Annotation: An RNA of 207 nucleotides, treated with 2A3 and DMS and read out base by base. Source: RMDB library OK3TST, as collected in RNAgym. Values are in units of 0.01, from 0 to 300, in steps of 10. Reactivities are given for positions 27 through 156. For DMS, 1,795 sequencing reads were counted.
RNA sequence: GGGAACGACUCGAGUAGAGUCGAAAAGAAAGAAGGCGUAAUCGCCGUGUACGAGCUCCACGAUCAAUGAUUUUCUCGCCCUCCGGCAUUGAUCGGACGUACCUCGGAUUGCCGCCUUACAAAGUUAAUACUAGAUUAAAUAAACCGUGAGGGCAAAGCUAUCAGUAAAUUUCGAUUUACUGAUAGCAAAAGAAACAACAACAACAAC
Reactivity to 2A3 in 0.01 (KOAc 150mM, MgCl2 10mM, bicine 150mM(pH8.5), 24C), signal-to-noise 3, nucleotides 027 to 156: g110a000a130a020g070a000a010g000g000c010g020u040a020a050u120c100g040c120c010g010u010g000u010a010c030g040a070g040c110u070c100c040a120c030g000a000u000c000a010a010u010g060a110u090u090u210u130c170u130c070g040c000c010c010u000c020c000g010g010c020a020u010u000g000a000u000c000g010g000a020c040g000u000a000c000c040u040c040g030g000a040u030u070g060c040c020g000c000c010u010u020a080c060a030a090a000g050u100u110a030a040u080a140c030u050a050g080a130u170u150a140a160a080u100a070a120a000c000c000g050u080g050a010g000g010g000c010a010a000a010
Reactivity to DMS in 0.01 (KOAc 150mM, MgCl2 10mM, bicine 150mM(pH8.5), 24C), signal-to-noise 1, nucleotides 027 to 156: g000a140a150a120g020a110a020g000g030c000g000u020a090a100u020c010g050c020c110g000u010g000u010a030c000g010a200g000c170u000c000c180a090c000g020a020u010c010a010a000u000g010a090u020u000u010u010c060u000c030g030c000c010c000u000c030c040g000g010c000a040u010u000g000a010u000c020g020g030a180c070g000u000a010c050c050u040c000g010g030a110u000u010g030c080c010g000c010c030u000u000a220c090a100a160a190g000u010u000a070a110u000a150c040u010a180g010a200u000u010a090a110a160u000a040a080a100c040c030g020u000g000a070g020g030g040c020a060a050a150